Description: The record gives the reactivity of an RNA of 207 nucleotides to 2A3. For 2A3, 414 sequencing reads were counted. Values cover nucleotides 27 to 156. For 2A3 the reverse transcriptase was SuperScript II with manganese.
[RMDB]
RNA sequence: GGGAACGACUCGAGUAGAGUCGAAAACUUAUGAAUCCAACCCCUAUACUUGUAUAGGCGAUUAAUAAAUCUUCUGUAAAUGCUGUAAGAGGAUUACCCCUUGAGGUUUCAGCACUAGGCUGCUCUAUAAAGUCGGGAUGGUUCGCCAUCCCGACAACUUGGUUAAGAUGUUCGCAUCUUAACCAAGAAAAGAAACAACAACAACAAC
Reactivity to 2A3 in 0.01 (KOAc 150mM, MgCl2 10mM, bicine 150mM(pH8.5), 24C), signal-to-noise 1, nucleotides 027 to 156: c050u230u160a110u300g090a050a060u080c030c000a040a040c030c000c010c010u040a050u040a100c030u080u230g080u030a040u030a010g020g000c050g070a070u080u130a200a060u140a080a090a030u010c010u070u010c000u060g130u130a040a130a160u100g030c080u050g080u120a060a000g010a020g030g030a010u010u020a070c060c010c000c020u030u070g120a080g130g100u100u080u040c000a000g010c010a010c070u070a040g100g080c030u030g000c010u060c000u100a130u010a090a120a000g000u010c000g000g000g000a020u010g000g010u040u000c090g040c090c020a000u000c000c000c000g000a000c000a000a000